An RNA of 177 nucleotides, treated with DMS and 2A3 and read out base by base.
[RMDB]
RNA sequence: GGGAACGACUCGAGUAGAGUCGAAAAAAGGACUGGUUCGCCAGUCCUUAUUCAAUCGUACGCAACGAAGCGUAAGUCAUUACGCAAAUGACUAAAAGCGUAUACGAAAGGACUUCGGUCCUUUCAAAUGUCGAUCAAUGUUCGCAUUGAUCGACAUAAAAGAAACAACAACAACAAC
Reactivity to DMS in 0.01 (KOAc 150mM, MgCl2 10mM, bicine 150mM(pH8.5), 24C), signal-to-noise 1, nucleotides 027 to 126: a020a010g000g000a020c020u000g000g000u000u000c130g010c000c000a000g000u000c000c000u000u000a030u000u000c070a090a080u010c120g000u000a050c010g020c000a090a140c170g020a040a150g050c000g020u000a010a030g000u050c300a100u000u000a010c040g000c040a080a040a190u020g000a070c060u010a040a020a160a130g000c010g000u000a030u000a060c270g000a000a000a010g020g000a020c000u000u020c210g020g010u000c000c000u000u000u000c000a040a100
Reactivity to 2A3 in 0.01 (KOAc 150mM, MgCl2 10mM, bicine 150mM(pH8.5), 24C), signal-to-noise 1, nucleotides 027 to 126: a010a000g020g000a030c020u020g000g050u030u000c090g100c000c000a000g000u000c000c000u000u010a000u000u020c000a010a020u100c030g020u010a030c020g000c030a030a030c130g170a150a090g020c000g050u020a020a020g090u080c040a090u000u040a030c040g020c040a070a070a050u190g000a100c060u100a000a000a120a000g000c040g010u010a040u010a050c050g000a000a000a000g000g000a000c010u040u070c160g100g040u050c000c090u040u010u010c010a000a000
Description
Values cover nucleotides 27 to 126. DMS adducts were read by reverse transcription with MarathonRT. For 2A3 the reverse transcriptase was SuperScript II with manganese. The reactions ran in a buffer of 150 mM KOAc, 10 mM MgCl2 and 150 mM bicine (pH 8.5), at 24 C. For DMS, 711 sequencing reads were counted. For 2A3, 943 sequencing reads were counted.